[RMDB]
RNA sequence: GGGAACGACUCGAGUAGAGUCGAAAAGAUAUGGAUCUGAACUACUUCCCAAUCACAACGUUGAAAUCAACUAUUGUCGGAAACGACAAUAGUUGAUGGAGUUGUGGAGGAAGCAGAUCCUAAGUCAGUUUAUAUGUCAGUUCGCUGACAUAUAAACAAAAGAAACAACAACAACAAC
Reactivity to 2A3 in 0.01 (KOAc 150mM, MgCl2 10mM, bicine 150mM(pH8.5), 24C), signal-to-noise 3, nucleotides 027 to 126: g060a020u080a080u190g000g010a010u000c020u010g040a080a170c100u180a090c030u300u020c020c010c000a040a170u280c000a010c010a030a010c010g300u300u120g070a120a130a020u000c000a000a010c010u000a020u000u010g000u000c000g000g070a170a090a080c010g000a000c000a000a010u010a010g000u010u000g000a000u000g000g010a030g000u000u000g000u010g000g040a180g000g000a010a000g000c000a000g000a010u000c000c010u020a150a010g090u030c020a000
Reactivity to DMS in 0.01 (KOAc 150mM, MgCl2 10mM, bicine 150mM(pH8.5), 24C), signal-to-noise 5, nucleotides 027 to 126: g010a060u000a300u000g000g010a000u000c000u000g010a080a080c110u020a300c010u000u000c010c000c070a240a150u010c020a000c000a000a010c000g020u010u010g000a140a130a010u000c000a000a010c000u000a000u000u000g010u010c000g010g010a120a100a210c010g010a000c000a000a010u000a010g000u000u000g000a000u000g000g000a070g000u000u000g020u000g010g010a110g000g000a020a010g000c020a000g000a010u000c000c000u000a030a090g010u010c040a170